[RMDB]
RNA sequence: GGGAACGACUCGAGUAGAGUCGAAAACAGCUCACCGGUGCAGACAGUGUUGGAAAUGGCGUUCAGGCAACAGUCCCAAUGCGGCUACGUAGGAUAUGUGAAAGUCCCGCUGGAUAAGGCCGGAUAAAGCAUUAAGCUCUUUCGAGAGCUUAAUGCUAAAAGAAACAACAACAACAAC
Reactivity to DMS in 0.01 (KOAc 150mM, MgCl2 10mM, bicine 150mM(pH8.5), 24C), signal-to-noise 2, nucleotides 027 to 126: c150a030g000c030u000c000a100c000c030g000g030u000g030c100a090g000a060c080a110g050u000g000u000u040g000g020a030a100a050u010g000g020c020g000u010u000c060a110g000g000c040a090a160c060a130g010u010c000c010c060a060a070u040g040c040g000g000c020u010a070c110g010u000a030g010g000a050u000a070u000g020u000g010a040a040a200g000u000c010c000c080g050c070u000g010g010a040u010a070a090g010g000c010c030g000g000a100u000a020a070
Reactivity to 2A3 in 0.01 (KOAc 150mM, MgCl2 10mM, bicine 150mM(pH8.5), 24C), signal-to-noise 3, nucleotides 027 to 126: c040a010g020c060u060c070a010c000c000g050g060u110g150c000a000g020a130c000a100g010u010g020u120u210g070g000a140a150a130u100g020g000c050g150u180u050c100a070g080g040c010a050a020c000a030g040u040c080c000c000a000a020u080g020c020g060g010c050u040a080c080g050u020a020g000g030a060u040a110u300g060u050g060a120a110a000g000u020c000c000c000g020c010u000g000g000a060u060a120a070g080g000c000c050g040g000a060u140a070a170